[RMDB]
RNA sequence: GGGAACGACUCGAGUAGAGUCGAAAAGAUAUGGAUACCAGGGAGCUUGCAUGGGUCGGAAACGACCCAUGAGCUUUGAUCUGGACGUCCUAAGUCAAAGGACAGUUAGGUUCGCCUAACUGUCCAACAUGCAAUAACUCUUCGGAGUUAUUGCAUGAAAAGAAACAACAACAACAAC
Reactivity to 2A3 in 0.01 (KOAc 150mM, MgCl2 10mM, bicine 150mM(pH8.5), 24C), signal-to-noise 2, nucleotides 027 to 126: g000a000u010a000u020g000g000a000u030a230c000c000a000g020g020g000a020g030c130u190u050g000c050a010u010g000g000g000u000c000g000g010a060a000a000c010g000a000c000c000c040a000u000g000a000g000c000u160u110u000g000a000u010c000u010g030g020a060c180g010u000c010c000u010a000a000g010u010c030a170a060a060g000g000a000c000a010g000u000u000a000g020g050u060u070c250g110c030c000u000a000a010c010u000g000u010c000c000a000a000
Reactivity to DMS in 0.01 (KOAc 150mM, MgCl2 10mM, bicine 150mM(pH8.5), 24C), signal-to-noise 3, nucleotides 027 to 126: g000a010u000a010u010g000g000a020u010a160c010c010a010g000g000g000a010g010c000u000u020g010c000a010u000g000g010g010u000c000g010g000a010a000a020c000g020a010c000c000c000a000u000g000a020g040c000u000u010u010g010a010u010c000u000g000g000a070c180g000u000c000c000u010a010a120g000u000c010a070a120a140g010g010a010c000a000g000u000u000a000g000g000u010u020c300g030c010c000u000a000a010c000u000g010u010c000c000a020a040
This 177-nucleotide RNA was probed chemically with 2A3 and DMS.
For 2A3 the reverse transcriptase was SuperScript II with manganese.
Reactivities are given for positions 27 through 126.
DMS (dimethyl sulfate) methylates the pairing face of unpaired adenines and cytosines.
Conditions: 150 mM KOAc, 10 mM MgCl2 and 150 mM bicine (pH 8.5), 24 C.